[RMDB]
RNA sequence: GGGAACGACUCGAGUAGAGUCGAAAAAGCGUAGCGGUACGCCGCUACGCAAGGCGCAUUUGAACUGUAUUGUACGCCUUGCAUAAAGCAAAAGUACUAAUAAAACGUGCCGUUACGACGGCACGAAAAAACAUCCAUUGGUUCGCCAAUGGAUGAACUUUAGUACGCGGUUCGCCGCGUACUAAAGAAAAGAAACAACAACAACAAC
Reactivity to 2A3 in 0.01 (KOAc 150mM, MgCl2 10mM, bicine 150mM(pH8.5), 24C), signal-to-noise 2, nucleotides 027 to 156: a000g040c000g000u010a000g000c010g020g010u020a030c190g050c040c010g000c000u000a000c010g000c000a000a000g000g000c040g020c030a040u080u090u300g160a190a150c080u140g090u230a090u090u120g030u050a050c000g020c010c000u010u010g000c020a130u150a270a060a040g070c020a000a030a070a020g040u040a030c050u090a090a090u070a090a140a090a020c010g000u000g000c000c000g000u000u050a090c300g020a000c000g160g000c040a000c000g000a010a000a010a000a000a010c010a000u000c000c000a000u000u000g010g000u080u060c170g030c090c000a000a000u000g000g010a000u000g000a000a000
Source information
Conditions: 150 mM KOAc, 10 mM MgCl2 and 150 mM bicine (pH 8.5), 24 C. Chemical mapping of a 207-nucleotide RNA with 2A3. Reactivities are given for positions 27 through 156. The 2A3 profile rests on 859 reads.